[RMDB]
RNA sequence: GGGAACGACUCGAGUAGAGUCGAAAAUCAGCCUCCCAAAGUUGCUGGGAUUACAGGCAUGAGCCACCGUGCCCGGCUCUAGCAAAUUAUUGAACCUGAGGAGGGGGUUGUGGGAACACCCCAUCUCGAAUGCUUAACUGUUCGCAGUUAAGCAUUCAAAAGAAACAACAACAACAAC
Reactivity to 2A3 in 0.01 (KOAc 150mM, MgCl2 10mM, bicine 150mM(pH8.5), 24C), signal-to-noise 2, nucleotides 027 to 126: u040c000a010g060c010c010u050c000c000c000a050a070a000g120u100u070g010c000u040g000g040g000a040u100u210a100c060a050g030g000c050a050u090g020a020g050c000c020a040c080c040g000u030g000c000c000c000g000g000c000u000c020u020a000g000c000a010a030a120u170u090a120u120u240g050a090a060c010c030u060g040a050g060g020a040g080g040g000g000g010u100u100g020u080g020g030g050a060a000c020a060c060c020c000c000a020u020c010u010c040
Reactivity to DMS in 0.01 (KOAc 150mM, MgCl2 10mM, bicine 150mM(pH8.5), 24C), signal-to-noise 3, nucleotides 027 to 126: u000c060a090g020c050c020u000c010c010c010a060a060a060g020u000u010g020c030u000g000g000g000a060u000u000a090c070a050g010g000c010a050u010g000a110g000c060c040a020c070c040g010u000g010c020c010c030g020g000c040u010c030u020a040g020c060a040a040a090u000u010a090u000u010g010a130a160c110c040u000g000a040g000g010a100g020g010g000g010g010u010u010g040u010g010g000g010a150a080c120a060c030c010c000c010a050u010c030u000c060
An RNA of 177 nucleotides, treated with 2A3 and DMS and read out base by base. DMS adducts were read by reverse transcription with MarathonRT. It was measured as part of the RMDB library OK2TRN. 2A3 adducts were read by reverse transcription with SuperScript II with manganese. The DMS profile rests on 3,236 reads.